Annotation:
Source: RMDB library OK2TRN, as collected in RNAgym. Chemical mapping of a 177-nucleotide RNA with 2A3 and DMS.

[RMDB]
RNA sequence: GGGAACGACUCGAGUAGAGUCGAAAAUCCUGUUGCCGAAGUACAGGAUCACAGGCGUGCAGAAGCUACAGUGCAGCAAACCAGUCCUGUUUUCAGGCGUCGUACCACCGGCUGUACACCCCAGGAAAACAACAGGUGCAUUCGUGCACCUGUUGUUAAAAGAAACAACAACAACAAC
Reactivity to 2A3 in 0.01 (KOAc 150mM, MgCl2 10mM, bicine 150mM(pH8.5), 24C), signal-to-noise 1, nucleotides 027 to 126: u030c010c000u030g090u030u110g040c010c020g000a050a010g100u000a010c000a000g020g010a020u070c050a040c020a060g030g010c020g100u030g000c010a110g030a300a030g090c030u160a220c010a060g120u020g110c010a030g010c010a030a050a010c020c020a000g040u060c020c000u000g090u010u000u040u070c080a080g000g040c030g000u030c050g030u060a030c010c050a100c070c000g050g000c060u040g070u040a000c010a040c000c020c000c000a010g260g000a100a280
Reactivity to DMS in 0.01 (KOAc 150mM, MgCl2 10mM, bicine 150mM(pH8.5), 24C), signal-to-noise 2, nucleotides 027 to 126: u000c000c010u000g030u000u030g030c010c030g000a050a050g000u000a040c030a030g010g020a030u000c070a090c170a160g000g000c300g000u010g020c030a020g040a170a060g000c130u000a100c140a120g000u000g010c030a090g010c050a050a090a050c060c050a130g000u000c010c000u000g020u020u000u000u000c070a120g010g000c070g010u000c180g010u000a050c090c080a100c150c040g020g000c030u000g020u010a030c110a210c030c000c010c040a170g000g000a080a030
DMS adducts were read by reverse transcription with MarathonRT. The DMS profile rests on 1,318 reads.